An RNA of 177 nucleotides, treated with DMS and read out base by base. For DMS, 769 sequencing reads were counted. For DMS the reverse transcriptase was MarathonRT. Reactivities are given for positions 27 through 126.

[RMDB]
RNA sequence: GGGAACGACUCGAGUAGAGUCGAAAAUUGGCUACGUUCGGGAGGGAUAACCGCUGAAAGCAUCUAAGCGGGAAGCCUGCUUCGAGAUGAGGACUCCCACCCACUUGAUGGGGUAAGGCUCCCAGUAAGUACACAACCACUUCGGUGGUUGUGUACUAAAAGAAACAACAACAACAAC
Reactivity to DMS in 0.01 (KOAc 150mM, MgCl2 10mM, bicine 150mM(pH8.5), 24C), signal-to-noise 1, nucleotides 027 to 126: u010u000g030g010c010u000a120c130g000u000u010c020g000g010g000a270g000g010g010a070u010a160a180c010c040g010c050u000g000a080a140a120g020c110a020u000c110u040a120a070g010c010g010g000g010a140a130g010c010c040u020g000c110u010u000c050g050a060g010a120u010g010a110g000g000a170c060u010c020c020c020a210c040c000c040a090c110u030u000g020a100u000g000g010g000g050u000a120a150g000g010c080u010c000c010c040a110g070u010a090